[RMDB]
RNA sequence: GGGAACGACUCGAGUAGAGUCGAAAAGAUAUGGAGCAGUCGGGAGGUCUAUAAUCGGAAACGAUUAUGGACCAUCGAUCGAGCUGCUCCUAAGUCAAACAGUCAAAUACUUCGGUAUUUGACUGAAGAGAUUACAUUGGUUCGCCAAUGUAAUCUCAAAAGAAACAACAACAACAAC
Reactivity to 2A3 in 0.01 (KOAc 150mM, MgCl2 10mM, bicine 150mM(pH8.5), 24C), signal-to-noise 2, nucleotides 027 to 126: g000a000u010a010u040g000g000a010g010c000a000g010u010c020g030g010g010a020g000g010u000c000u020a010u010a010a010u010c000g000g000a020a000a000c000g010a010u030u000a000u010g000g000a000c010c000a010u060c000g010a010u010c010g010a050g190c010u000g000c000u000c000c000u000a000a000g010u020c000a040a090a100c000a010g000u000c000a010a000a010u020a000c020u050u130c300g180g000u000a000u010u000u020g000a000c000u010g000a040a020
Reactivity to DMS in 0.01 (KOAc 150mM, MgCl2 10mM, bicine 150mM(pH8.5), 24C), signal-to-noise 2, nucleotides 027 to 126: g010a020u000a020u000g000g000a000g020c000a010g000u010c010g000g020g000a000g070g020u000c010u010a000u000a000a000u010c010g010g000a010a010a030c000g010a010u000u000a000u000g010g010a000c000c000a070u000c200g000a020u010c010g010a070g020c010u000g010c000u000c000c000u000a000a070g000u000c010a180a130a270c020a000g000u000c000a000a000a000u000a000c000u000u010c220g020g000u000a010u000u000u000g000a000c010u000g010a060a090